[RMDB]
RNA sequence: GGGAACGACUCGAGUAGAGUCGAAAAGUCUUCGGACGAACUAGGUGGUCCACACCAGUGUCUCGGACAGCGGUUCGAUUCCGCUCAGCUCCAUUCCCCCGACCCACCGCCCCGCAGGCGGUGCGUCUAUAACGCCGGUCUUCGGACCGGCGUUAUAAAAAGAAACAACAACAACAAC
Reactivity to 2A3 in 0.01 (KOAc 150mM, MgCl2 10mM, bicine 150mM(pH8.5), 24C), signal-to-noise 1, nucleotides 027 to 126: g020u040c010u050u050c100g040g030a000c000g040a100a020c040u030a130g020g010u010g020g040u200c160c020a120c020a000c050c000a020g000u040g000u000c060u080c110g040g050a000c040a050g010c020g080g020u030u010c050g020a000u000u050c000c020g000c010u000c010a000g000c040u000c010c000a030u050u000c010c000c000c000c010g000a000c060c020c000a010c000c000g000c000c040c000c040g250c140a040g000g000c000g000g000u000g000c000g010u000c000
Reactivity to DMS in 0.01 (KOAc 150mM, MgCl2 10mM, bicine 150mM(pH8.5), 24C), signal-to-noise 1, nucleotides 027 to 126: g120u000c190u000u050c100g050g000a060c010g040a060a040c030u000a100g000g000u000g030g010u000c170c150a140c040a060c000c000a000g000u050g000u000c100u060c060g000g080a040c300a000g010c100g000g000u000u000c090g010a300u000u050c120c000g050c000u000c130a040g000c130u000c000c000a300u060u000c040c000c000c150c270g000a000c000c120c000a000c000c000g010c010c000c150c090g000c300a040g030g030c000g000g030u000g120c260g000u080c000